[RMDB]
Chemical mapping of a 177-nucleotide RNA with DMS and 2A3. Values cover nucleotides 27 to 126. The reactions ran in a buffer of 150 mM KOAc, 10 mM MgCl2 and 150 mM bicine (pH 8.5), at 24 C. The 2A3 profile rests on 965 reads.
RNA sequence: GGGAACGACUCGAGUAGAGUCGAAAAACCUCCACCUUCGGGUGGAGGUCGUGCGUAGCUCCGUUAAAUUAAUAGCUACGCUUAAUAAAUUUAUUUAACGCAUAAAACUGUGUUUCGACACAGUUAACCAACACUUCAAGUUCGCUUGAAGUGUUGGAAAAGAAACAACAACAACAAC
Reactivity to DMS in 0.01 (KOAc 150mM, MgCl2 10mM, bicine 150mM(pH8.5), 24C), signal-to-noise 1, nucleotides 027 to 126: a060c000c000u010c000c000a020c000c000u020u000c190g030g020g020u000g010g020a030g000g000u000c020g030u000g020c000g010u000a000g000c010u030c290c030g000u020u020a040a060a090u000u000a080a110u000a140g010c010u020a000c000g030c000u000u000a020a030u020a070a110a100u010u000u000a040u040u000u000a000a080c030g010c300a130u000a050a050a050a010c000u000g000u000g010u030u000u000c190g020a050c000a020c000a010g000u000u000a050a120
Reactivity to 2A3 in 0.01 (KOAc 150mM, MgCl2 10mM, bicine 150mM(pH8.5), 24C), signal-to-noise 1, nucleotides 027 to 126: a000c000c000u000c000c000a010c000c000u040u090c270g080g000g030u040g000g030a010g020g000u020c000g010u100g000c000g000u000a000g010c000u000c090c050g060u070u100a150a120a080u180u120a060a140u120a140g000c000u000a010c000g020c010u000u040a030a020u080a000a030a000u080u100u070a060u030u110u120a040a000c010g000c050a060u170a130a280a000a010c000u030g000u000g000u000u010u080c180g020a000c000a000c000a030g000u000u000a010a020